The record gives the reactivity of an RNA of 207 nucleotides to 2A3. The reactions ran in a buffer of 150 mM KOAc, 10 mM MgCl2 and 150 mM bicine (pH 8.5), at 24 C. Source: RMDB library M2RFPK, as collected in RNAgym.
[RMDB]
RNA sequence: GGGAACGACUCGAGUAGAGUCGAAAAUCGCUUCACAAUGUGCGGCAAAGAAACAUUGUUUAUGCAAAGGCACUUCGCAAUGUGUGCUCAAACAUUGCUUAUUCAAACACGCUUCACAAUGUGCGACAAAACUUCACGGUCUUCGGACCGUGAAGAAGCCAGGCCAUAAGUUCGCUUAUGGCCUGGCAAAAGAAACAACAACAACAAC
Reactivity to 2A3 in 0.01 (KOAc 150mM, MgCl2 10mM, bicine 150mM(pH8.5), 24C), signal-to-noise 2, nucleotides 027 to 156: u070c000g000c020u000u030c000a000c030a000a100u040g000u010g020c010g030g020c010a030a110a180g090a040a030a000c010a000u000u060g140u110u100u120a130u130g070c050a050a060a060g120g010c030a030c010u100u100c030g000c050a060a110u030g030u000g070u000g080c070u120c180a040a070a030c010a040u000u000g000c030u060u080a140u100u040c050a050a030a060c020a000c110g000c060u040u060c000a030c030a060a270u170g030u050g090c100g090a050c070a000a110a000a020c000u000u000c000a000c000g000g000u000c010u070u030c080g070g000a010c020c000g010u000g000a000a000g000a000a000